[RMDB]
RNA sequence: GGGAACGACUCGAGUAGAGUCGAAAAGAACCAAAGUGGCAUGGGAACAAAUCAAGGGAAAAAUCCGUAUUCUGGGACCAAAUGCAGUGUUUACAGUUUCCUGCAACGUGGAUUUCAUUUGCCAGUGAAUCUCUGUCACUUUCGAGUGACAGAGAUUAAAAGAAACAACAACAACAAC
Reactivity to 2A3 in 0.01 (KOAc 150mM, MgCl2 10mM, bicine 150mM(pH8.5), 24C), signal-to-noise 1, nucleotides 027 to 126: g090a010a040c020c000a110a010a020g140u080g060g030c050a050u030g000g070g010a100a070c020a040a060a100u170c060a120a120g050g010g150a030a110a000a000a230u010c050c000g010u030a090u100u130c090u120g060g010g010a000c000c080a130a000a000u080g030c000a010g000u050g090u120u040u040a080c040a090g000u020u040u020c000c000u030g000c010a000a000c020g040u070g050g020a110u000u090u000c020a030u000u110u130g070c000c000a030g000u020g050
Reactivity to DMS in 0.01 (KOAc 150mM, MgCl2 10mM, bicine 150mM(pH8.5), 24C), signal-to-noise 2, nucleotides 027 to 126: g000a170a200c010c030a080a060a100g040u000g010g010c020a100u020g020g000g000a040a060c090a080a110a150u000c130a100a080g000g000g000a010a130a040a070a060u000c040c030g020u000a120u000u000c120u000g000g010g000a060c090c070a030a050a100u010g010c010a030g020u010g000u000u000u000a090c110a100g000u000u000u010c020c010u010g000c060a020a050c200g010u010g000g000a080u000u000u000c050a100u010u000u000g020c010c040a020g000u010g030
An RNA of 177 nucleotides, treated with 2A3 and DMS and read out base by base. For DMS the reverse transcriptase was MarathonRT. The RNA was probed in 150 mM KOAc, 10 mM MgCl2 and 150 mM bicine (pH 8.5) at 24 C. It was measured as part of the RMDB library OK2TRN. Reactivities are given for positions 27 through 126. For 2A3, 846 sequencing reads were counted.